Overview
The data come from the RNA Mapping Database (RMDB), library OK2TST. The record gives the reactivity of an RNA of 177 nucleotides to DMS. DMS adducts were read by reverse transcription with MarathonRT. In probing experiments dimethyl sulfate is read out at A N1 and C N3, which are open when not base-paired. The reactions ran in a buffer of 150 mM KOAc, 10 mM MgCl2 and 150 mM bicine (pH 8.5), at 24 C.
[RMDB]
RNA sequence: GGGAACGACUCGAGUAGAGUCGAAAAGGACUGUCCGUCCGGGGCCUCGCUGUUAUUCGCCCAGCUUAUCCAAGUCGCGCUUCCUCGGGGUGCUGUAGCAGAUCGUCCGGACCAGUGCGACCGAGACUGCCUGAAUGUGGUUCGCCACAUUCAGGCAAAAAGAAACAACAACAACAAC
Reactivity to DMS in 0.01 (KOAc 150mM, MgCl2 10mM, bicine 150mM(pH8.5), 24C), signal-to-noise 1, nucleotides 027 to 126: g010g000a050c020u020g010u000c150c180g000u000c010c000g070g020g030g010c050c030u000c060g010c070u020g020u000u000a080u000u000c150g000c040c030c030a150g010c090u000u000a070u000c010c060a150a080g000u000c090g010c060g000c070u000u000c070c020u000c050g040g000g020g020u000g010c070u000g020u000a080g020c070a080g000a110u020c050g000u000c020c020g000g000a120c140c050a090g000u000g030c000g000a030c050c030g010a150g030a140c230
The DMS profile rests on 856 reads.